[RMDB]
RNA sequence: GGGAACGACUCGAGUAGAGUCGAAAAGAUAUGGAUCGUGUUGUGUUGAGAUCCUCCUCGGAAACGAGGAGAGAUCAAUGAUGCACACCACGAUCCUAAGUCAAAACCCCUUGGUUCGCCAAGGGGAUCCUGACAACGUCUUCGGACGUUGUCAGGAAAAAGAAACAACAACAACAAC
Reactivity to DMS in 0.01 (KOAc 150mM, MgCl2 10mM, bicine 150mM(pH8.5), 24C), signal-to-noise 1, nucleotides 027 to 126: g000a000u010a060u000g000g000a000u010c000g020u020g000u000u010g000u000g070u000u000g010a300g000a000u000c000c000u000c000c000u000c000g020g030a040a020a050c000g000a000g000g010a000g010a070g020a000u000c010a030a060u000g010a040u000g010c000a000c000a020c110c000a010c000g010a000u000c020c000u010a000a070g000u000c000a140a140a090a170c000c000c000c030u000u000g000g000u000u010c240g040c000c000a010a020g020g010g020g000a020
Reactivity to 2A3 in 0.01 (KOAc 150mM, MgCl2 10mM, bicine 150mM(pH8.5), 24C), signal-to-noise 1, nucleotides 027 to 126: g010a000u060a000u050g020g010a010u010c000g010u020g040u030u050g000u000g000u080u210g060a110g000a020u000c000c000u000c020c000u040c000g000g000a010a030a040c010g020a000g050g050a010g000a010g000a010u020c000a000a040u280g190a140u300g000c000a000c010a010c030c000a000c000g000a000u010c000c000u010a010a000g000u020c000a000a050a160a230c020c000c010c050u000u030g000g090u060u110c300g000c150c000a000a000g010g000g000g020a010